[RMDB]
RNA sequence: GGGAACGACUCGAGUAGAGUCGAAAAGCGUAAGCUUCGGCUUACGCAAAAAAACCUUUGUGACUGGUAUAGGCUUGGAUUUAGCAAUCCCAUUGGGAUUGCUUGUCAGCCUUUACCAAGUCACUCUGGUAAAAAGUUUUGUGUUCGCACAAAACAACUAAGUACUACACUUCGGUGUAGUACUUAGAAAAGAAACAACAACAACAAC
Reactivity to 2A3 in 0.01 (KOAc 150mM, MgCl2 10mM, bicine 150mM(pH8.5), 24C), signal-to-noise 2, nucleotides 027 to 156: g020c050g000u010a000a000g000c000u050u110c220g060g010c000u010u010a000c010g000c010a000a000a000a000a000a000a000c000c000u000u010u000g010u000g010a000c000u040g000g020u020a030u030a050g010g020c010u010u220g200g000a050u300u300u110a000g000c000a000a010u000c010c020c110a300u170u300g000g000g000a000u000u000g020c000u000u000g000u000c010a000g010c000c000u010u000u000a010c000c010a010a000g000u000c010a000c000u010c000u000g020g020u080a140a060a080a060a000g010u000u000u000u000g000u000g020u020u120c290g050c100a000c010a010a000a000a000c010a010a000
Reactivity to DMS in 0.01 (KOAc 150mM, MgCl2 10mM, bicine 150mM(pH8.5), 24C), signal-to-noise 1, nucleotides 027 to 156: g030c000g010u000a000a010g020c000u000u000c260g100g000c030u000u000a010c010g050c010a000a010a060a110a040a060a010c000c000u010u010u020g000u010g000a050c000u040g010g000u000a000u000a020g020g010c000u000u000g050g020a040u000u000u000a020g060c010a020a010u000c000c000c000a300u010u010g080g090g000a020u000u000g030c020u000u000g000u010c000a040g000c000c010u010u000u010a000c010c000a000a100g000u010c010a010c000u010c030u010g000g020u000a030a100a100a120a140g000u000u000u000u000g060u000g030u010u000c300g030c040a020c000a010a020a010a030c020a170a200